Source: RMDB library OK2TST, as collected in RNAgym. An RNA of 177 nucleotides, treated with 2A3 and DMS and read out base by base. The 2A3 profile rests on 1,450 reads.

RNA sequence: GGGAACGACUCGAGUAGAGUCGAAAAGAUUCGCGUCACCCAGUGAGAUGUCGGCCGCGCUGGAAACCGCGUUGCUGCUGUAUGGACUCGAGGACGGCGGAACGCGUGUUGUUCUCGACGUGCCUGCCUCCUCCUACUCCUUCGGGAGUAGGAGGAGAAAAGAAACAACAACAACAAC
Reactivity to 2A3 in 0.01 (KOAc 150mM, MgCl2 10mM, bicine 150mM(pH8.5), 24C), signal-to-noise 2, nucleotides 027 to 126: g000a100u070u030c030g000c020g040u010c040a040c000c000c000a010g070u060g050a130g020a090u040g010u110c020g010g010c020c010g010c000g050c020u060g020g000a060a030a020c010c030g020c030g030u080u130g100c000u000g000c010u020g030u030a100u110g060g100a110c020u000c090g010a050g060g060a010c020g000g000c010g000g000a090a040c050g000c030g120u220g030u080u040g030u030u010c010u010c020g080a090c070g030u140g000c000c000u000g040c000
Reactivity to DMS in 0.01 (KOAc 150mM, MgCl2 10mM, bicine 150mM(pH8.5), 24C), signal-to-noise 1, nucleotides 027 to 126: g000a120u000u010c070g020c100g000u000c040a150c100c000c000a100g000u000g000a090g000a060u010g010u010c130g010g020c000c030g050c020g030c040u010g000g000a070a070a090c070c000g000c000g020u000u000g000c040u020g000c010u000g000u020a020u010g040g000a100c120u000c050g020a010g000g010a030c000g000g000c000g040g010a100a000c000g010c010g020u010g010u020u040g010u000u010c000u000c030g020a060c090g010u010g010c040c010u000g010c070
DMS adducts were read by reverse transcription with MarathonRT. Reactivities are given for positions 27 through 126.